[RMDB]
RNA sequence: GGGAACGACUCGAGUAGAGUCGAAAACGCAAAGCUGCAGCGCGGCGCUCUGGAGGCCUUGCCCCGCGCACUGCUCUUUACAUGGCCCGACGUGAGGGCACUUCGCGGGCAGUGCUGCGACCUCGUGAAACUGCCCCUAAGUUCGCUUAGGGGCAAAACUAUGUAUUCUCUUCGGAGAAUACAUAGUAAAAGAAACAACAACAACAAC
Reactivity to 2A3 in 0.01 (KOAc 150mM, MgCl2 10mM, bicine 150mM(pH8.5), 24C), signal-to-noise 2, nucleotides 027 to 156: c040g000c060a050a020a130g030c060u070g000c030a040g050c010g010c030g090g040c100g040c020u040c030u060g090g000a030g030g020c020c010u040u030g020c000c000c000c000g000c000g030c000a010c000u000g020c020u000c000u070u140u040a120c100a110u170g050g020c000c020c030g070a090c040g100u170g070a100g000g000g000c020a110c060u060u060c030g010c040g030g020g000c000a000g000u000g000c050u040g000c020g030a040c010c000u010c030g000u080g000a080a090a090c040u020g040c000c000c000c000u000a000a000g000u010u100c180g040c140u000u010a000g010g000g000g010c000a000a000a000
Reactivity to DMS in 0.01 (KOAc 150mM, MgCl2 10mM, bicine 150mM(pH8.5), 24C), signal-to-noise 1, nucleotides 027 to 156: c120g030c020a080a070a120g000c030u010g060c060a060g010c060g000c050g040g000c080g010c060u000c050u000g010g020a090g020g000c040c060u000u000g010c000c020c030c040g010c090g030c030a060c020u020g010c000u000c020u010u030u010a080c020a080u000g020g010c010c000c020g010a170c150g030u040g000a140g010g010g000c010a040c030u000u000c040g020c230g010g000g000c000a100g050u000g000c000u020g020c020g000a090c040c020u010c050g000u000g000a090a050a130c080u000g000c000c050c000c000u000a030a040g010u000u000c300g010c000u000u000a040g030g020g000g040c000a000a010a000